[RMDB]
RNA sequence: GGGAACGACUCGAGUAGAGUCGAAAAAACAGUAACGUCGUUAUCUGUCAUGCCACCGAGGGUUAGCGGUCAUGGUUAACCAAAUAGGGCAGGUUAUUGCAAAGAGACAUCCGUGUUUAUACCCAAAAUAACUGGCGUUAUUCGUAACGCCAGUUAUAAAAGAAACAACAACAACAAC
Reactivity to DMS in 0.01 (KOAc 150mM, MgCl2 10mM, bicine 150mM(pH8.5), 24C), signal-to-noise 2, nucleotides 027 to 126: a090a040c030a060g020u010a050a120c070g000u010c090g010u010u000a050u020c040u000g010u010c050a080u000g000c000c020a080c020c030g020a170g000g010g000u020u000a020g000c000g020g010u050c130a110u040g010g010u000u000a020a030c060c010a030a060a080u040a170g010g000g000c050a040g020g000u000u030a040u000u000g020c090a090a030a040g000a090g050a050c070a030u010c030c030g000u010g000u000u010u000a090u040a070c050c010c000a050a030a040
Reactivity to 2A3 in 0.01 (KOAc 150mM, MgCl2 10mM, bicine 150mM(pH8.5), 24C), signal-to-noise 3, nucleotides 027 to 126: a000a000c030a010g020u050a070a020c020g050u020c020g000u060u040a070u080c030u020g040u040c040a050u090g020c030c010a040c030c020g050a070g010g010g040u020u030a010g030c000g040g060u120c030a060u090g100g020u000u020a020a010c010c000a000a090a060u090a040g010g040g040c010a030g010g030u060u110a080u090u100g000c020a000a170a030g080a010g010a020c000a040u010c020c050g010u010g080u040u060u000a070u090a100c030c020c010a060a040a000